[RMDB]
RNA sequence: GGGAACGACUCGAGUAGAGUCGAAAAUAUUUAGUACGCGCGUAGUUGCAGGCAUUCCGGGUGCAGCAACUGACGCGGAAGACUUUUCCCAGAGUGUGCGCUUCAACUGGCGUGCUGAGUAGUGCACGAAUUGCACGUACGUUCGCGUACGUGCAAAGACUGUAAUAACCUUCGGGUUAUUACAGUCAAAAGAAACAACAACAACAAC
Reactivity to 2A3 in 0.01 (KOAc 150mM, MgCl2 10mM, bicine 150mM(pH8.5), 24C), signal-to-noise 3, nucleotides 027 to 156: u120a020u050u140u060a010g010u010a020c010g000c000g000c030g110u010a010g010u010u010g010c060a080g060g030c010a020u080u150c130c180g210g080g040u000g000c020a010g000c000a010a000c000u060g110a040c000g000c010g000g000a020a020g080a040c060u140u060u020u000c000c000c000a010g030a030g060u110g000u000g020c000g020c020u050u070c080a130a080c050u050g030g000c060g020u020g020c010u010g000a030g050u120a030g030u020g040c030a010c030g020a070a130u050u030g000c000a000c000g000u000a010c000g000u010u070c180g010c000g080u000a000c010g000u000g010c000a010a000a000
Reactivity to DMS in 0.01 (KOAc 150mM, MgCl2 10mM, bicine 150mM(pH8.5), 24C), signal-to-noise 2, nucleotides 027 to 156: u000a050u000u000u010a050g000u000a100c020g000c010g030c020g030u010a020g060u000u000g030c000a130g020g000c010a020u010u000c020c300g000g070g140u000g000c020a300g000c010a030a020c000u010g030a010c000g000c020g000g000a060a160g000a080c110u000u000u000u000c010c000c010a240g000a220g020u000g030u000g020c040g050c020u000u000c060a060a180c040u000g000g040c030g030u000g040c030u000g000a060g010u000a080g030u000g000c000a050c030g010a160a200u000u000g000c000a010c030g040u010a000c000g040u000u010c300g010c040g000u000a000c000g060u000g020c010a000a040a030